[RMDB]
RNA sequence: GGGAACGACUCGAGUAGAGUCGAAAACUGACACUGUUGUCCCCAGAUCCAUGCAUGUAUUCUCUGCCUCCAGUUGUUUUCCACCAUAUUGGAAAUAAGAUUCUGUCUACUAGCCAUGGCCUACUGGGCUGCACAUGACCUACACCCUGCCUACCUACCUGCCAUUAUUAUUCGUAAUAAUGGCAGGAAAAGAAACAACAACAACAAC
Reactivity to 2A3 in 0.01 (KOAc 150mM, MgCl2 10mM, bicine 150mM(pH8.5), 24C), signal-to-noise 3, nucleotides 027 to 156: c020u040g040a020c020a000c130u080g040u120u000g060u060c010c000c000c020a020g010a020u030c030c000a040u070g030c030a000u090g050u120a050u090u060c060u000c030u050g050c020c030u010c030c030a020g000u000u000g030u040u050u030u040c040c010a050c020c030a060u080a060u150u090g010g060a030a040a050u120a040a050g060a080u070u070c040u090g040u000c020u090a120c010u030a030g070c050c030a000u060g030g050c020c010u060a080c050u080g000g030g000c000u020g000c010a030c020a070u080g070a060c000c000u040a020c010a020c010c010c000u050g050c030c020u110a050c080c000u120a060
Reactivity to DMS in 0.01 (KOAc 150mM, MgCl2 10mM, bicine 150mM(pH8.5), 24C), signal-to-noise 2, nucleotides 027 to 156: c060u010g030a100c050a090c070u020g000u000u000g020u000c010c000c010c010a160g010a110u010c030c010a070u010g070c070a100u020g010u010a080u010u010c040u000c050u000g000c030c010u010c040c020a130g020u010u000g010u000u000u000u010c000c030a110c100c090a210u000a140u020u000g010g010a050a050a080u010a060a100g000a140u000u000c080u020g000u000c010u010a090c080u000a100g030c000c000a100u000g010g020c020c000u000a110c090u010g000g010g030c040u000g000c050a050c070a140u010g010a120c020c010u000a070c020a030c040c000c010u000g020c000c010u000a080c030c030u000a220

This 207-nucleotide RNA was probed chemically with 2A3 and DMS. The RNA was probed in 150 mM KOAc, 10 mM MgCl2 and 150 mM bicine (pH 8.5) at 24 C. 2A3 adducts were read by reverse transcription with SuperScript II with manganese. For DMS the reverse transcriptase was MarathonRT. High DMS reactivity at an A or C suggests that its Watson-Crick edge is free.